[RMDB]
RNA sequence: GGGAACGACUCGAGUAGAGUCGAAAAGAUUCUGGUUUCCAGCAUCACCCCAACACCGCUGGGGGAAGGUAAAACCGUCACGACCAUUGGUUUAAGUCAGGGAAUCAACCGCUUAGGCUAUCGCGGGAACCGAUCAUCCUUUCGAGGAUGAUCGGUUAAAAGAAACAACAACAACAAC
Reactivity to DMS in 0.01 (KOAc 150mM, MgCl2 10mM, bicine 150mM(pH8.5), 24C), signal-to-noise 1, nucleotides 027 to 126: g030a090u010u000c010u010g000g010u000u010u000c040c010a100g000c150a060u010c070a180c060c010c000c070a040a140c090a170c030c030g040c110u000g010g010g000g000g010a100a130g000g000u000a030a030a040a300c050c060g000u000c020a120c070g000a160c030c020a190u000u000g010g000u000u000u000a080a060g010u000c030a160g020g000g000a140a100u020c300a080a170c020c000g000c030u010u000a010g020g030c090u000a050u010c050g000c020g010g000g000
Reactivity to 2A3 in 0.01 (KOAc 150mM, MgCl2 10mM, bicine 150mM(pH8.5), 24C), signal-to-noise 1, nucleotides 027 to 126: g030a010u100u000c000u050g030g000u110u180u120c030c000a000g000c000a030u000c010a070c010c010c000c010a010a040c040a060c000c030g060c040u040g010g000g000g030g070a070a000g040g000u080a050a050a050a080c040c050g070u050c050a070c080g050a050c000c000a100u090u130g040g000u000u070u080a010a010g000u020c260a130g010g060g060a000a250u120c020a030a090c010c010g030c010u030u020a010g030g000c040u070a070u160c020g000c000g040g010g020